[RMDB]
RNA sequence: GGGAACGACUCGAGUAGAGUCGAAAAGAUAUGGACUAAGCUAGCGUUCAGGUCGGAAACGACCUGGACGCUUGGACCUUAUGUCCUAAGUCAAAGUCGUUGGUAUUGUUCGCAAUACCAACGACAACUCAAACAACCAGUUCGCUGGUUGUUUGAGAAAAGAAACAACAACAACAAC
Reactivity to DMS in 0.01 (KOAc 150mM, MgCl2 10mM, bicine 150mM(pH8.5), 24C), signal-to-noise 3, nucleotides 027 to 126: g010a040u010a300u020g000g000a020c010u000a050a010g010c010u000a010g020c000g040u010u000c010a000g000g010u000c000g010g010a070a100a160c020g010a020c000c000u010g000g000a000c000g010c000u000u010g020g010a120c300c020u000u000a010u010g010u000c000c000u010a080a110g010u000c030a110a110a110g010u000c000g010u000u000g000g010u000a000u000u000g020u000u020c210g010c010a020a000u010a010c000c000a000a000c000g010a000c000a010a050

An RNA of 177 nucleotides, treated with DMS and read out base by base.
Conditions: 150 mM KOAc, 10 mM MgCl2 and 150 mM bicine (pH 8.5), 24 C.